Overview
Chemical mapping of a 207-nucleotide RNA with DMS and 2A3. The 2A3 profile rests on 1,442 reads. 2A3 adducts were read by reverse transcription with SuperScript II with manganese. Conditions: 150 mM KOAc, 10 mM MgCl2 and 150 mM bicine (pH 8.5), 24 C.

RNA sequence: GGGAACGACUCGAGUAGAGUCGAAAAUAAUAAAAUGCUGAGAAAAACUUAGAUUAUGUUUAAAAGCAUUGAGUGAACUAAAACCUAAGUAAAGCUAUUUACUUUGCAUACAUAUGGCCACCAUCUAAGAUGGUUACUUAUCCUUGAAAGGAUAAUGCAUCUGACCACUAUUCGUAGUGGUCAGAUGAAAAGAAACAACAACAACAAC
Reactivity to DMS in 0.01 (KOAc 150mM, MgCl2 10mM, bicine 150mM(pH8.5), 24C), signal-to-noise 1, nucleotides 027 to 156: u000a050a120u000a100a070a120a040u000g020c000u010g000a150g010a150a130a100a080a070c030u000u010a190g030a170u000u010a130u030g000u000u000u000a080a210a110a110g000c010a040u010u030g020a180g000u000g010a060a090c090u000a060a080a090a030c030c030u000a050a070g030u000a030a070a080g020c130u000a040u000u000u000a070c010u000u000u010g000c030a100u000a120c030a100u000a100u000g020g050c000c020a030c000c010a070u000c070u000a080a130g040a020u000g000g000u000u000a040c060u000u030a030u010c020c000u000u000g010a060a130a110g020g010a010u000a030a030u010g010
Reactivity to 2A3 in 0.01 (KOAc 150mM, MgCl2 10mM, bicine 150mM(pH8.5), 24C), signal-to-noise 2, nucleotides 027 to 156: u110a010a010u040a040a050a000a000u010g020c000u000g010a020g090a110a090a030a000a010c020u060u070a070g040a090u120u140a100u300g020u040u050u050a040a070a020a000g000c000a000u040u030g000a040g080u150g040a030a000c030u030a120a070a000a070c000c000u000a000a020g010u010a030a030a030g040c040u090a170u120u120u040a050c000u030u070u080g070c000a040u060a180c030a050u150a140u170g040g000c000c050a030c000c000a000u040c010u060a100a010g010a030u010g000g040u040u060a000c000u050u000a000u020c000c000u030u090g110a200a180a050g020g010a010u010a020a020u070g020